[RMDB]
RNA sequence: GGGAACGACUCGAGUAGAGUCGAAAACACGAAAGUUGGCUAAUCCUGGUCGGACAUCAGGAGGUUAGUGCAGUGGCAUAAGCCAACUUGGCGCUAAUAGAUACUAAUCGUAGCAUAGCUGAAUAAACGAUUACCAUAGCUUCGGCUAUGGUAAUCGAAAAGAAACAACAACAACAAC
Reactivity to 2A3 in 0.01 (KOAc 150mM, MgCl2 10mM, bicine 150mM(pH8.5), 24C), signal-to-noise 3, nucleotides 027 to 126: c040a040c020g040a040a080a020g010u000u000g000g010c020u020a020a040u000c000c000u000g060g040u050c090g100g020a050c000a070u020c000a010g030g020a000g030g120u140u170a050g000u000g070c030a080g130u170g200g000c000a020u040a140a060g000c000c000a000a000c000u000u000g040g030c010g000c020u010a030a000u080a200g040a020u070a060c000u100a160a050u060c040g060u020a000g020c070a070u120a010g050c080u060g050a130a040u170a150a050a020
Reactivity to DMS in 0.01 (KOAc 150mM, MgCl2 10mM, bicine 150mM(pH8.5), 24C), signal-to-noise 3, nucleotides 027 to 126: c040a190c110g010a060a070a020g030u000u000g020g040c030u000a060a280u020c000c000u000g020g010u030c220g000g000a300c150a020u000c010a020g010g000a050g000g000u000u000a040g060u000g010c000a180g020u020g000g030c000a040u000a140a080g000c010c000a030a000c020u000u000g000g020c090g000c030u010a040a030u050a060g020a080u020a070c160u020a100a030u040c090g000u000a010g010c030a030u000a030g010c000u010g000a050a110u010a030a040a150